[RMDB]
RNA sequence: GGGAACGACUCGAGUAGAGUCGAAAACGCCUGGGCGCCCUCGCCUGGAUCCGCUGGCCUAGUUUCCUCUGGAUUCUAGCGCUACGAUCUUCGGGUUGAGGCCCCUACGCACUCCUUCCCACGCUGCUAGUCGCUCGACUAAGGGUUGAUUUCCGAUAAAGGUAUAUAAGUUCGCUUAUAUACCUUUAAAAGAAACAACAACAACAAC
Reactivity to DMS in 0.01 (KOAc 150mM, MgCl2 10mM, bicine 150mM(pH8.5), 24C), signal-to-noise 1, nucleotides 027 to 156: c090g030c040c070u010g000g000g010c070g000c100c000c000u000c040g090c000c020u030g000g010a030u010c050c020g030c060u000g050g060c070c020u000a050g010u000u000u000c020c020u000c250u030g080g020a030u000u000c020u000a020g000c070g080c000u000a050c030g000a080u000c000u000u000c040g050g020g040u000u000g070a030g020g020c020c010c020c030u020a030c030g000c000a200c110u030c080c140u000u010c030c010c020a300c240g040c030u000g000c020u000a030g010u000c060g000c100u010c080g020a150c090u010a100a160g040g030g000u000u050g020a230u000u000u000c030c000g000a300u000
Reactivity to 2A3 in 0.01 (KOAc 150mM, MgCl2 10mM, bicine 150mM(pH8.5), 24C), signal-to-noise 1, nucleotides 027 to 156: c060g010c000c010u010g000g020g000c090g060c070c010c000u010c000g000c000c000u010g030g000a000u000c000c030g000c020u000g000g020c000c000u010a000g000u030u000u050c020c040u270c270u300g000g030a000u000u010c000u010a010g010c000g000c140u010a010c130g020a000u010c000u100u200c100g040g010g010u020u300g030a040g000g010c000c000c030c020u050a050c060g000c010a040c070u170c030c050u010u010c020c010c010a020c070g110c060u110g030c020u030a010g010u020c000g060c260u190c250g110a020c020u020a060a070g060g030g020u010u000g100a300u000u000u000c000c040g000a000u000